[RMDB]
RNA sequence: GGGAACGACUCGAGUAGAGUCGAAAACGAUAUUCUGGUGGUUGAUGAGGUUAGUAUGUGCACUAAUUAUGAUCUUUCAAUUAUUAAUGCACGUAUUAAAGCUAAGCACAUUGUCUAUGUAGGAGAUUGACUGCUCUCUUCGGAGAGCAGAAAAGAAACAACAACAACAAC
Reactivity to 2A3 in 0.01 (KOAc 150mM, MgCl2 10mM, bicine 150mM(pH8.5), 24C), signal-to-noise 4, nucleotides 027 to 129: c040g000a020u040a050u130u190c050u090g100g040u010g010g060u090u000g010a110u020g020a010g070g000u010u030a000g000u000a030u000g000u000g000c000a000c000u000a010a030u030u030a040u010g150a090u060c240u080u300u090c150a150a140u070u000a000u010u000a010a000u000g000c010a020c000g000u040a000u010u110a130a010a000g050c020u000a020a020g020c000a040c000a000u050u130g060u030c040u050a100u140g120u100a040g000g120a020g040a040u060u160g030a060
Reactivity to DMS in 0.01 (KOAc 150mM, MgCl2 10mM, bicine 150mM(pH8.5), 24C), signal-to-noise 5, nucleotides 027 to 129: c110g030a160u030a070u090u010c060u030g000g030u000g030g010u000u000g020a090u040g010a080g030g040u010u000a010g040u000a060u020g000u020g020c020a070c110u000a000a060u020u040a080u030g030a090u040c240u060u000u040c130a040a090u040u020a020u000u010a000a040u030g000c000a000c010g040u060a020u020u020a000a000a000g040c070u030a070a080g020c040a050c090a140u040u000g010u040c090u020a050u040g020u030a100g030g000a110g000a050u010u010g030a160
Chemical mapping of a 170-nucleotide RNA with 2A3 and DMS. The 2A3 profile rests on 3,842 reads. Source: RMDB library 15KLIB, as collected in RNAgym.